This 207-nucleotide RNA was probed chemically with DMS and 2A3.
Values cover nucleotides 27 to 156.
Source: RMDB library OK3TST, as collected in RNAgym.
For DMS the reverse transcriptase was MarathonRT.
The RNA was probed in 150 mM KOAc, 10 mM MgCl2 and 150 mM bicine (pH 8.5) at 24 C.
The DMS profile rests on 2,222 reads.
In probing experiments dimethyl sulfate is read out at A N1 and C N3, which are open when not base-paired.

RNA sequence: GGGAACGACUCGAGUAGAGUCGAAAAGAACCUCUUCCAGGCUUACGACGGAGCCUGUAGGUAGAACGGAUGGGAAAGCAUGCCUGCAUGCGAAAGGAUGGGUGUGCCAUCCGAAACGUACGAUACCGUCGUUGCAUGCGAAAGGAUGGACCGGAUGAACAUCACUCUCUUUCGAGAGAGUGAUGUUAAAAGAAACAACAACAACAAC
Reactivity to DMS in 0.01 (KOAc 150mM, MgCl2 10mM, bicine 150mM(pH8.5), 24C), signal-to-noise 1, nucleotides 027 to 156: g030a150a100c010c010u000c020u000u030c110c020a070g030g000c000u010u000a040c000g000a120c040g040g030a170g040c050c010u000g000u000a010g030g070u000a040g000a100a140c090g000g020a150u020g020g020g020a040a120a220g040c040a050u010g030c000c050u020g000c090a090u000g040c000g000a090a110a170g020g000a030u020g000g000g020u000g040u020g010c000c000a070u000c000c000g000a000a050a060c050g020u000a050c060g010a140u000a130c020c010g020u020c000g030u000u010g000c000a060u000g000c000g010a090a050a120g000g020a140u000g000g010a070c010c050g010g000a200u010g000
Reactivity to 2A3 in 0.01 (KOAc 150mM, MgCl2 10mM, bicine 150mM(pH8.5), 24C), signal-to-noise 2, nucleotides 027 to 156: g010a020a080c000c010u010c020u130u060c020c010a010g020g040c010u080u090a010c010g000a010c000g030g010a000g040c000c040u080g060u080a050g020g070u110a000g060a130a050c050g090g000a040u050g070g000g000a000a110a150g100c000a000u060g060c000c030u060g050c040a040u060g100c080g170a160a000a060g050g020a050u010g000g000g050u130g070u110g120c040c010a000u000c000c010g010a040a000a000c030g030u090a040c040g040a040u050a070c030c010g000u000c000g000u030u040g010c030a020u030g000c020g040a060a050a000g100g000a040u080g040g040a020c000c090g060g000a040u210g090